[RMDB]
Chemical mapping of a 177-nucleotide RNA with 2A3 and DMS.
RNA sequence: GGGAACGACUCGAGUAGAGUCGAAAAGAGGUAGUAGCACAGCAGGUCACUCCAAAUGACCAUGCUAAUGCCAGAGCAUUUUCGCAUCUGGCCAGUAAACUAAUCGAGCUGGAGGUUCCUACCACAGGUUACAAAGUCUGUUCGCAGACUUUGUAACAAAAGAAACAACAACAACAAC
Reactivity to 2A3 in 0.01 (KOAc 150mM, MgCl2 10mM, bicine 150mM(pH8.5), 24C), signal-to-noise 2, nucleotides 027 to 126: g100a040g030g000u030a020g000u040a010g020c010a020c010a070g030c010a020g030g010u000c010a000c020u080c060c040a030a070a060u080g000a010c000c030a080u010g030c010u060a080a040u090g010c000c010a010g020a010g000c020a050u080u060u200u300c110g010c020a230u000c010u000g010g000c010c010a030g000u090a040a130a050c070u050a110a070u120c100g030a030g020c010u010g020g000a050g130g000u000u020c000c000u020a010c000c020a040c020a040g190
Reactivity to DMS in 0.01 (KOAc 150mM, MgCl2 10mM, bicine 150mM(pH8.5), 24C), signal-to-noise 2, nucleotides 027 to 126: g000a110g050g010u000a030g000u040a030g030c040a070c160a100g040c010a110g030g000u000c000a040c090u000c130c250a110a220a160u000g000a020c000c010a080u000g030c000u000a110a080u000g010c000c000a020g010a040g020c010a140u000u010u000u010c120g000c020a100u000c000u000g000g000c010c050a010g000u000a110a060a100c100u000a070a040u010c120g000a180g000c020u000g010g030a130g000g000u000u000c060c000u000a090c060c060a140c140a040g000
2A3 is a SHAPE reagent: it acylates the 2'-hydroxyl of flexible nucleotides of all four kinds.
2A3 adducts were read by reverse transcription with SuperScript II with manganese.
DMS adducts were read by reverse transcription with MarathonRT.
It was measured as part of the RMDB library RFMREP.
Reactivities are given for positions 27 through 126.